[RMDB]
RNA sequence: GGGAACGACUCGAGUAGAGUCGAAAAACUGCUGUAUGCUUCGGAUCGAUUUUUGAGUAUGCCGAAGGUGGCUUGAUUCGAUUCAAUUUUUAACGACUUCUAACCGUUACGUUUAUCUCGGUGGUUGUCGUACGUUUUACUUCGGUAAAACGUACGAAAAAGAAACAACAACAACAAC
Reactivity to DMS in 0.01 (KOAc 150mM, MgCl2 10mM, bicine 150mM(pH8.5), 24C), signal-to-noise 3, nucleotides 027 to 126: a050c180u000g000c020u000g000u020a040u060g000c020u000u010c070g000g000a020u000c010g000a070u020u000u000u030u030g000a120g010u020a100u010g020c000c010g020a020a030g010g020u010g000g000c010u000u010g000a080u000u020c050g000a070u010u010c030a070a020u010u030u010u000u050a060a130c020g020a030c050u020u000c050u010a070a060c070c000g020u000u030a080c120g020u000u010u030a090u030c030u000c010g000g000u000g010g040u000u000g010
Reactivity to 2A3 in 0.01 (KOAc 150mM, MgCl2 10mM, bicine 150mM(pH8.5), 24C), signal-to-noise 5, nucleotides 027 to 126: a000c060u060g010c050u060g100u180a130u270g120c020u080u040c030g050g030a030u010c010g050a120u030u030u090u120u230g050a060g020u230a170u300g080c010c020g120a090a060g030g070u060g020g010c010u060u070g030a040u000u070c030g010a000u000u040c030a050a100u040u060u010u090u120a050a070c040g000a010c010u100u020c010u100a020a070c070c000g020u010u090a060c010g040u080u200u070a230u040c050u000c000g050g020u030g010g010u030u030g050